This 177-nucleotide RNA was probed chemically with DMS and 2A3.
The reactions ran in a buffer of 150 mM KOAc, 10 mM MgCl2 and 150 mM bicine (pH 8.5), at 24 C.
Reactivities are given for positions 27 through 126.
DMS adducts were read by reverse transcription with MarathonRT.
The 2A3 profile rests on 1,242 reads.
Reactivities are rounded to 0.1 and cut off at 0 and 3.

RNA sequence: GGGAACGACUCGAGUAGAGUCGAAAACUAGCUGUAGAGAUUGCAAAUAAGACUGUGAUAGACACUGAACCUUUAAAAUCAUGUCUGGCAGCCCUGGAUGGAGGUGAUGUAGCCUGUGACAUAAUAAGUAUAACGUGACGUUCGCGUCACGUUAUACAAAAGAAACAACAACAACAAC
Reactivity to DMS in 0.01 (KOAc 150mM, MgCl2 10mM, bicine 150mM(pH8.5), 24C), signal-to-noise 2, nucleotides 027 to 126: c060u010a010g070c030u000g000u030a070g010a120g010a070u000u000g030c130a030a060a090u040a120a100g000a120c030u000g030u020g020a110u010a060g030a040c030a020c130u000g000a100a160c050c040u000u000u050a070a060a170a110u000c040a060u030g000u000c010u000g000g000c040a050g010c070c060c010u000g000g000a080u000g000g000a080g010g000u020g000a030u010g000u000a120g000c010c010u010g020u010g030a060c110a000u050a070a070u000a020a070
Reactivity to 2A3 in 0.01 (KOAc 150mM, MgCl2 10mM, bicine 150mM(pH8.5), 24C), signal-to-noise 3, nucleotides 027 to 126: c050u010a010g000c070u030g010u100a080g040a040g010a120u050u100g000c030a060a080a050u090a030a080g070a070c040u010g010u000g060a020u100a120g070a020c020a000c060u060g100a150a180c000c020u180u230u290a090a090a040a040u100c050a060u050g050u050c000u010g050g000c010a000g010c000c010c000u040g040g000a010u030g010g000a030g000g010u070g020a150u100g050u040a010g010c030c030u090g010u070g030a000c000a080u160a050a040u140a300a000